[RMDB]
This 177-nucleotide RNA was probed chemically with DMS. The reactions ran in a buffer of 150 mM KOAc, 10 mM MgCl2 and 150 mM bicine (pH 8.5), at 24 C.
RNA sequence: GGGAACGACUCGAGUAGAGUCGAAAAGAUAUGGAGCUUGCUCAUGAUGCAACAGCAACAGAACUACGAACAUUGUCGGAAACGACAAGUUCGCUGUUGACAUGCAUCAUGAGCAAGCUCCUAAGUCCUCCUACUACGACUUCGGUCGUAGUAGGAGAAAAGAAACAACAACAACAAC
Reactivity to DMS in 0.01 (KOAc 150mM, MgCl2 10mM, bicine 150mM(pH8.5), 24C), signal-to-noise 1, nucleotides 027 to 126: g010a110u000a300u000g020g000a000g010c000u010u000g000c000u000c030a030u000g030a010u000g030c040a010a030c300a300g040c010a050a000c000a010g040a170a110c160u070a300c010g000a040a030c010a160u000u000g010u000c000g010g000a120a120a110c000g000a010c000a010a000g000u000u000c000g000c000u000g000u010u000g000a010c130a180u000g020c000a020u000c000a000u000g010a010g030c000a000a000g010c040u000c000c010u000a030a080g010u010c030